RNA sequence: GGGAACGACUCGAGUAGAGUCGAAAAGCGUAUAGAUGUCUGUUACAUGAUACAAAGUACAGCGGAAAGGUAAUCAAAGUUUCUGCAACACCUCCUGGGAGAGAAUGUGAAUUCACAACUCAAUGUCUCGAUUCUAAGCUUUCGAGCUUAGAAUCGAAAAAGAAACAACAACAACAAC
Reactivity to DMS in 0.01 (KOAc 150mM, MgCl2 10mM, bicine 150mM(pH8.5), 24C), signal-to-noise 2, nucleotides 027 to 126: g000c130g020u000a030u000a030g000a060u010g000u060c080u000g000u010u030a110c040a080u010g040a110u000a030c100a100a080a020g000u000a120c100a070g020c020g000g000a070a030a030g030g010u000a080a120u010c080a080a080a060g020u010u010u010c030u030g000c050a100a070c120a090c040c050u000c010c000u000g010g010g000a100g000a090g020a030a100u000g030u080g020a110a030u020u000c040a040c090a130a040c080u000c020a120a030u010g010u000c110
Reactivity to 2A3 in 0.01 (KOAc 150mM, MgCl2 10mM, bicine 150mM(pH8.5), 24C), signal-to-noise 4, nucleotides 027 to 126: g050c100g030u140a070u080a220g190a120u050g050u080c020u040g100u140u110a070c040a110u110g020a030u140a090c080a060a140a030g040u030a120c030a030g000c010g030g100a100a040a040g090g080u150a060a060u100c080a000a160a000g040u040u050u090c020u010g000c010a050a000c010a070c050c000u020c010c010u020g030g100g010a040g000a010g010a070a090u140g030u020g070a070a120u160u100c040a000c000a030a130c030u060c020a060a110u080g030u050c030
The record gives the reactivity of an RNA of 177 nucleotides to DMS and 2A3. It was measured as part of the RMDB library OK1LIB. For DMS, 2,439 sequencing reads were counted. Conditions: 150 mM KOAc, 10 mM MgCl2 and 150 mM bicine (pH 8.5), 24 C. Values cover nucleotides 27 to 126.